[RMDB]
RNA sequence: GGGAACGACUCGAGUAGAGUCGAAAACUCAAUGUAGGGAAUAACAUUGAAUUGAUACAAAUACUUUUUUCGGUGUAGGGAAAAACACCGAAUUGAUACAAAUACCUUUCUCAAUGUAGGGAAUAACAAAACAGGCAUCGCUUCGGCGAUGCCUGAAGUAGAUUAAUCCGUUCGCGGAUUAAUCUACAAAAGAAACAACAACAACAAC
Reactivity to 2A3 in 0.01 (KOAc 150mM, MgCl2 10mM, bicine 150mM(pH8.5), 24C), signal-to-noise 3, nucleotides 027 to 156: c020u030c010a010a010u100g050u090a080g040g070g110a080a140u150a080a010c020a000u000u050g030a070a040u130u100g050a040u090a210c070a050a150a040u120a100c060u110u150u100u020u010u050c010g000g000u000g010u030a080g030g020g070a060a170a040a000a000c000a000c000c000g000a000a000u000u020g000a000u020a030c040a020a080a010u080a060c000c000u030u070u030c050u010c030a050a090u110g020u060a070g000g020g070a050a060u160a140a040c040a060a020a020a030c010a000g000g000c000a010u000c000g050c000u010u070c110g090g000c040g000a000u000g020c000c000u000g010a000a010